The record gives the reactivity of an RNA of 177 nucleotides to 2A3 and DMS.
For 2A3, 6,623 sequencing reads were counted.
For 2A3 the reverse transcriptase was SuperScript II with manganese.
DMS adducts were read by reverse transcription with MarathonRT.
DMS (dimethyl sulfate) methylates the pairing face of unpaired adenines and cytosines.
Values cover nucleotides 27 to 126.

RNA sequence: GGGAACGACUCGAGUAGAGUCGAAAAGAUAUGGAACGUGUGGAGUGCGUUGAAAUGAGGUCGGAAACGACCUCAUGGAGCACCCACUGCGUUCCUAAGUCAAAAGAGGGAGCUUCGGCUCCCUCAACGAUAGAGUUCUGUUCGCAGAACUCUAUCGAAAAGAAACAACAACAACAAC
Reactivity to 2A3 in 0.01 (KOAc 150mM, MgCl2 10mM, bicine 150mM(pH8.5), 24C), signal-to-noise 2, nucleotides 027 to 126: g020a010u040a010u080g000g000a010a010c030g020u030g040u050g080g050a300g060u010g000c030g180u300u040g000a000a010a000u010g000a000g020g000u010c000g000g000a020a040a030c000g010a000c000c010u000c000a000u010g000g000a010g000c000a010c000c010c000a010c020u010g000c000g000u020u000c000c000u000a020a000g020u000c020a060a010a210a030g000a000g000g030g010a000g000c000u100u130c300g130g020c000u000c000c000c020u000c000a010a000
Reactivity to DMS in 0.01 (KOAc 150mM, MgCl2 10mM, bicine 150mM(pH8.5), 24C), signal-to-noise 4, nucleotides 027 to 126: g010a030u010a300u010g000g010a000a000c000g020u010g020u000g010g010a150g040u000g020c000g020u010u010g020a170a120a010u000g000a020g000g010u000c000g010g010a050a060a170c000g000a000c000c000u000c000a010u000g000g000a070g010c000a030c020c000c000a000c020u010g040c030g010u000u000c000c000u000a000a060g010u020c020a120a070a160a100g000a010g010g010g010a030g000c010u000u010c280g040g000c010u000c010c000c000u000c000a000a040